[RMDB]
RNA sequence: GGGAACGACUCGAGUAGAGUCGAAAAGAUCUGCGCCGAUCCGAAACGCUAGCAAACAGCCCGCAUCAUGUCGUUUCCUAACUUCGACGUGGUGAAAUACUGAGCUUAUGCGAGUAAGCCUGUUAGCAAUAGAUCAGAACGUUCGCGUUCUGAUCAACUAAGGAGGACGAUUCGUCGUCCUCCUUAGAAAAGAAACAACAACAACAAC
Reactivity to 2A3 in 0.01 (KOAc 150mM, MgCl2 10mM, bicine 150mM(pH8.5), 24C), signal-to-noise 6, nucleotides 027 to 156: g030a050u010c020u080g030c060g020c080c040g030a060u040c030c040g040a040a090a030c070g010c070u060a020g010c040a070a020a100c030a060g040c000c000c010g070c010a010u010c000a000u000g010u010c010g000u020u040u050c040c060u100a110a100c070u050u040c010g010a000c000g020u010g000g020u030g020a040a030a000u180a040c050u040g020a020g000c000u020u020a020u080g090c040g020a030g070u010a010a000g000c000c020u040g030u090u080a040g020c020a100a170u050a200g010a000u000c000a000g000a000a000c010g020u060u070c250g000c000g110u000u000c020u000g000a000u000c000a010a020
Reactivity to DMS in 0.01 (KOAc 150mM, MgCl2 10mM, bicine 150mM(pH8.5), 24C), signal-to-noise 3, nucleotides 027 to 156: g030a080u000c020u000g020c050g000c060c050g000a060u010c030c070g000a110a070a090c070g010c010u000a070g020c050a050a040a190c130a130g020c000c010c060g010c000a030u000c020a040u000g000u010c000g010u000u000u010c090c030u000a140a090c090u000u000c010g010a060c030g060u000g000g000u000g000a070a080a080u000a090c130u010g010a150g010c010u000u000a120u010g000c160g000a170g030u000a040a100g000c020c020u000g010u000u010a110g010c020a090a130u000a130g010a020u000c000a000g000a020a010c010g020u000u000c300g020c030g020u000u000c000u000g010a010u000c000a030a100

The record gives the reactivity of an RNA of 207 nucleotides to 2A3 and DMS.